[RMDB]
RNA sequence: GGGAACGACUCGAGUAGAGUCGAAAAGAAGAUAAGAGACUAGACACCGUGGGCAGAUGACAAGAAAGUCCGUCGGUGUCGGUAAGGUCGUCAGUCACAGGCGACCGUUUUCUGUGACUCUAAAGAAAAUGGGUAGCAGGUUCGCCUGCUACCCAUUAAAAGAAACAACAACAACAAC
Reactivity to 2A3 in 0.01 (KOAc 150mM, MgCl2 10mM, bicine 150mM(pH8.5), 24C), signal-to-noise 2, nucleotides 027 to 126: g060a050a000g080a020u090a030a090g020a020g040a010c020u120a060g010a000c000a000c000c000g000u040g000g000g000c010a000g010a230u200g040a150c010a160a040g120a170a050a010g030u020c000c000g060u120c030g000g000u020g000u000c000g000g000u000a030a000g070g000u010c010g000u000c000a020g130u160c070a020c010a030g060g000c010g000a010c000c000g010u070u010u010u020c000u000g120u050g050a040c030u080c020u130a210a010a070g150a000a060
Reactivity to DMS in 0.01 (KOAc 150mM, MgCl2 10mM, bicine 150mM(pH8.5), 24C), signal-to-noise 4, nucleotides 027 to 126: g000a020a030g000a030u000a120a110g000a150g000a040c020u010a090g010a000c000a000c020c030g030u000g000g000g000c030a050g010a210u040g060a160c300a180a050g000a080a220a100g000u010c000c000g010u020c000g010g010u000g020u000c000g010g040u000a060a050g020g010u010c000g040u010c000a080g000u050c300a100c300a120g000g010c000g000a020c000c020g010u000u000u010u010c010u000g020u000g000a150c040u000c040u010a030a100a100g000a030a080